RNA sequence: GGGAACGACUCGAGUAGAGUCGAAAAUAACGUACUUUCGAGUACGUUAAGUCUCCCGGCGCUAGCAGGGCAGAAGAGAAGAUGGAGGAGCUGGUGGUGGAAUUAGGGGGGGAUUCGUCCCCCCCAACUAUUGGAACGAUUUCGAUCGUUCCAAUAGAAAAGAAACAACAACAACAAC
Reactivity to 2A3 in 0.01 (KOAc 150mM, MgCl2 10mM, bicine 150mM(pH8.5), 24C), signal-to-noise 2, nucleotides 027 to 126: u030a010a000c000g000u000a000c000u040u110u100c210g010a000g000u010a000c000g000u000u010a010a020g020u010c030u010c070c000c000g050g010c060g010c030u040a040g000c030a070g030g030g020c030a020g020a150a000g030a030g000a100a020g030a050u080g020g060a070g020g000a040g000c030u020g020g020u030g030g030u050g050g080a110a150u150u080a300g000g000g000g000g000g000g000a000u020u000c030g030u010c000c000c010c000c000c000c000a000a010
Reactivity to DMS in 0.01 (KOAc 150mM, MgCl2 10mM, bicine 150mM(pH8.5), 24C), signal-to-noise 5, nucleotides 027 to 126: u000a010a000c000g010u000a000c000u000u000u010c150g000a030g020u000a010c000g010u000u010a010a060g000u000c100u000c010c020c010g020g000c070g010c080u000a060g030c080a070g000g010g010c060a030g010a080a080g000a090g010a050a080g010a060u000g000g010a070g010g000a080g010c040u000g020g020u000g000g020u000g010g020a100a100u010u010a080g010g010g010g010g000g000g000a030u000u010c140g000u000c000c000c000c000c000c000c000a000a020

This 177-nucleotide RNA was probed chemically with 2A3 and DMS. The data come from the RNA Mapping Database (RMDB), library M2PK50. Reactivities are rounded to 0.1 and cut off at 0 and 3. For DMS the reverse transcriptase was MarathonRT.